[RMDB]
RNA sequence: GGGAACGACUCGAGUAGAGUCGAAAACGGAGUCGUGGCAUGAAAAAGCUAAGCAACUGGCUGCUUGGCCUGUGGAUUUCAUUCUGCUCGCUAUUGCAAAUCUGGCCUGAGUCCAUGCUUUAUGUGUGGGCCAUGAUGCCGGACGACCUGAAAUCCGAUGAAUGUUUGUGUUCGCACAAACAUUCAUAAAAGAAACAACAACAACAAC
Reactivity to 2A3 in 0.01 (KOAc 150mM, MgCl2 10mM, bicine 150mM(pH8.5), 24C), signal-to-noise 4, nucleotides 027 to 156: c030g030g000a050g020u030c020g030u050g030g020c070a060u140g100a090a080a010a000a010g000c020u020a040a010g020c020a030a170c070u150g140g020c030u020g010c020u040u030g010g000c000c010u050g020u080g000g020a020u080u100u020c030a030u120u000c050u080g030c030u030c050g040c050u100a110u210u150g040c040a070a050a160u020c010u020g000g000c000c010u030g010a030g020u000c000c000a010u020g020c000u240u300u230a200u250g010u000g010u010g000g010g000c000c010a030u080g050a040u120g000c010c000g000g010a020c010g040a030c010c030u010g010a050a030a010u030c040c030g020
Reactivity to DMS in 0.01 (KOAc 150mM, MgCl2 10mM, bicine 150mM(pH8.5), 24C), signal-to-noise 1, nucleotides 027 to 156: c030g000g000a080g010u010c010g070u000g010g020c030a130u000g010a050a040a080a110a070g000c030u000a060a050g020c030a030a200c080u010g010g020c090u010g000c030u000u000g010g000c000c010u000g020u020g080g010a110u000u000u030c090a080u010u000c030u010g010c020u010c090g020c070u000a090u010u000g000c030a060a080a050u000c000u010g010g000c010c040u000g000a130g020u010c010c000a000u000g010c020u010u000u000a110u040g040u000g060u010g020g010g000c000c000a030u010g010a070u000g050c010c000g000g010a040c020g010a090c060c070u000g000a030a060a120u000c000c010g010
Conditions: 150 mM KOAc, 10 mM MgCl2 and 150 mM bicine (pH 8.5), 24 C.
This 207-nucleotide RNA was probed chemically with 2A3 and DMS.
It was measured as part of the RMDB library OK3TST.
2A3 adducts were read by reverse transcription with SuperScript II with manganese.